[RMDB]
RNA sequence: GGGAACGACUCGAGUAGAGUCGAAAAGAUAUGGACGCUCCACCAGCAACAGCUAAGAGGUUGCUAUUUGUCUCGGAAACGAGACAAAUAGCAACCUCUUAGACAUGCUGCGUGGGCGUCCUAAGUCCAUGUCAAUUAUCUUCGGAUAAUUGACAUGAAAAGAAACAACAACAACAAC
Reactivity to DMS in 0.01 (KOAc 150mM, MgCl2 10mM, bicine 150mM(pH8.5), 24C), signal-to-noise 2, nucleotides 027 to 126: g010a080u020a300u000g010g000a010c000g020c010u040c010c010a020c040c010a040g020c000a040a090c300a180g010c000u000a010a010g030a030g020g020u010u000g000c000u010a020u000u000u000g000u020c000u020c000g020g000a090a120a220c010g040a030g000a000c010a010a010a010u010a010g010c030a000a000c000c010u000c000u000u000a000g000a020c050a080u000g000c010u010g020c240g030u000g000g000g030c000g000u010c010c000u010a010a080g000u010c030